Source: RMDB library RFM100, as collected in RNAgym. The record gives the reactivity of an RNA of 177 nucleotides to DMS and 2A3. For DMS, 1,062 sequencing reads were counted. The RNA was probed in 150 mM KOAc, 10 mM MgCl2 and 150 mM bicine (pH 8.5) at 24 C. Reactivities are given for positions 27 through 126.

[RMDB]
RNA sequence: GGGAACGACUCGAGUAGAGUCGAAAACGGUCCCUAUCCUCCGCGGGCGCAGGAGAAUCGAGGGAGGCUGCCCCUAGUACGAGAGGACCGGGGUGGACGGACCUCCGGUGAACCGGUUGUCGACCAACCGCAUGCUGGAAUUCGUUCCAGCAUGCGGAAAAGAAACAACAACAACAAC
Reactivity to DMS in 0.01 (KOAc 150mM, MgCl2 10mM, bicine 150mM(pH8.5), 24C), signal-to-noise 1, nucleotides 027 to 126: c110g020g000u000c000c000c000u000a240u030c000c040u000c000c000g010c030g000g000g020c060g000c150a040g010g000a030g030a300a010u010c070g000a000g040g060g000a170g000g000c040u040g000c000c000c040c000u000a030g000u000a100c080g050a120g070a270g020g000a170c200c120g000g000g000g000u000g000g000a190c120g000g000a300c010c060u000c000c090g010g000u060g000a280a100c070c000g000g000u000u000g000u060c180g070a060c030c040a120a130
Reactivity to 2A3 in 0.01 (KOAc 150mM, MgCl2 10mM, bicine 150mM(pH8.5), 24C), signal-to-noise 1, nucleotides 027 to 126: c020g000g020u070c020c000c000u010a060u000c040c070u060c000c010g030c000g080g000g080c030g080c060a010g000g120a070g080a050a080u040c000g000a060g000g060g000a000g040g000c000u070g040c000c060c000c000u040a010g020u030a020c030g000a010g010a120g170g020a010c000c000g030g010g000g000u080g020g040a020c040g050g120a060c000c020u020c000c010g000g000u090g050a060a070c000c000g000g000u060u010g020u070c030g040a010c020c020a080a010